[RMDB]
RNA sequence: GGGAACGACUCGAGUAGAGUCGAAAAGACGGUCGAUAUCGGCUCCAAGACGGCCGAAACGCUGCACGCGCAGGGGCAGCAGAUGGAGCGCGUGCUUGACAACCUCGAAGAGAUGCGCUUCGACAUCGCAGUAAACGGGAUUCGUCCCGUUUACUGCAAAAGAAACAACAACAACAAC
Reactivity to 2A3 in 0.01 (KOAc 150mM, MgCl2 10mM, bicine 150mM(pH8.5), 24C), signal-to-noise 2, nucleotides 027 to 126: g060a000c030g030g030u050c010g020a030u040a050u200c050g040g040c030u000c030c020a050a050g050a030c010g010g030c000c030g010a020a010a020c080g040c020u050g000c000a000c020g080c020g050c060a060g090g030g030g000c010a040g060c030a010g030a130u260g040g020a060g010c000g030c000g030u080g140c000u030u010g030a040c070a060a080c010c060u110c070g030a100a000g030a000g010a090u140g040c060g000c070u010u050c040g030a060c040a150u100c080
Reactivity to DMS in 0.01 (KOAc 150mM, MgCl2 10mM, bicine 150mM(pH8.5), 24C), signal-to-noise 2, nucleotides 027 to 126: g030a170c060g000g000u000c010g010a150u000a060u000c060g010g020c010u000c000c090a100a130g000a100c260g010g000c000c050g010a030a090a100c090g000c050u000g020c040a000c070g030c100g010c080a060g000g000g000g010c010a120g030c100a100g040a070u000g000g000a130g020c000g000c020g030u000g000c020u000u000g000a230c110a070a190c110c030u000c070g000a060a190g060a150g000a120u000g010c060g000c110u000u000c030g030a120c150a050u000c120
Description: Conditions: 150 mM KOAc, 10 mM MgCl2 and 150 mM bicine (pH 8.5), 24 C. Structure probing data (2A3 and DMS) for a 177-nucleotide construct. For 2A3 the reverse transcriptase was SuperScript II with manganese. The DMS profile rests on 1,003 reads.